[RMDB]
RNA sequence: GGGAACGACUCGAGUAGAGUCGAAAAGAUAUGGACGACGUAGGGAGCUUGGUGUCGGAAACGACACCCAAGCAUCGAUCUACCUCGUCCUAAGUCAAACCAUUUACGUCUUCGGACGUAAAUGGAACGCCUACGUUCUGUUCGCAGAACGUAGGCGAAAAGAAACAACAACAACAAC
Reactivity to DMS in 0.01 (KOAc 150mM, MgCl2 10mM, bicine 150mM(pH8.5), 24C), signal-to-noise 1, nucleotides 027 to 126: g000a030u000a060u010g010g000a000c000g000a010c220g010u000a010g010g040g000a010g040c020u000u000g000g010u000g000u000c030g020g000a000a030a020c000g010a000c010a000c300c250c300a010a000g000c000a300u000c190g000a020u000c010u000a000c000c090u000c000g020u000c000c000u000a000a090g090u000c000a140a190a180c010c000a000u000u000u000a000c010g000u000c000u020u020c300g040g010a020c000g050u010a000a000a000u000g000g000a070a030
The record gives the reactivity of an RNA of 177 nucleotides to DMS. DMS adducts were read by reverse transcription with MarathonRT. Conditions: 150 mM KOAc, 10 mM MgCl2 and 150 mM bicine (pH 8.5), 24 C. Reactivities are given for positions 27 through 126.